Chemical mapping of a 207-nucleotide RNA with DMS and 2A3. DMS adducts were read by reverse transcription with MarathonRT. For DMS, 2,177 sequencing reads were counted. 2A3 adducts were read by reverse transcription with SuperScript II with manganese.
RNA sequence: GGGAACGACUCGAGUAGAGUCGAAAACAUGAUCUUUCGAGAUCAUGGACUUAAGCGGGAUGGGAUAGCUAGGAGAUUCCGCCGGGCUCAUAACCCGGAGAUCGGUAGUUCAAAUCUACCUCCCGCUACCACACAUGGACACCUUUCGAGGUGUCAAAAGUUAAGGAUCUUUCGAGAUCCUUAACUUAAAAGAAACAACAACAACAAC
Reactivity to DMS in 0.01 (KOAc 150mM, MgCl2 10mM, bicine 150mM(pH8.5), 24C), signal-to-noise 1, nucleotides 027 to 156: c020a010u010g010a000u000c000u000u000u000c270g040a040g050a030u000c000a000u000g000g010a150c090u000u000a070a060g020c010g030g000g030a120u010g000g000g000a100u000a100g010c070u000a140g010g020a200g010a110u010u010c050c050g000c010c010g020g010g040c000u000c300a060u000a000a030c020c000c010g000g030a150g000a030u000c030g000g030u010a040g030u010u000c140a100a180a110u000c040u000a010c000c000u010c000c020c000g000c010u000a000c020c040a090c090a090c110a180u000g000g010a040c000a020c000c020u000u000u000c210g010a050g030g020u020g010u010c000a010a050
Reactivity to 2A3 in 0.01 (KOAc 150mM, MgCl2 10mM, bicine 150mM(pH8.5), 24C), signal-to-noise 2, nucleotides 027 to 156: c000a000u000g010a000u000c020u020u130u140c240g080a020g000a020u000c000a000u000g000g000a030c040u110u150a080a000g010c000g000g000g000a000u020g020g010g030a040u020a020g000c050u040a040g030g140a170g170a020u040u000c010c000g000c000c000g000g000g000c010u030c090a070u150a220a060c000c000c000g020g000a000g000a010u070c010g000g000u020a010g020u020u000c020a010a010a020u000c000u020a030c000c000u000c000c000c000g010c000u000a000c000c000a080c010a020c010a080u120g090g000a000c000a000c010c000u010u100u190c290g110a010g000g000u010g000u000c000a010a030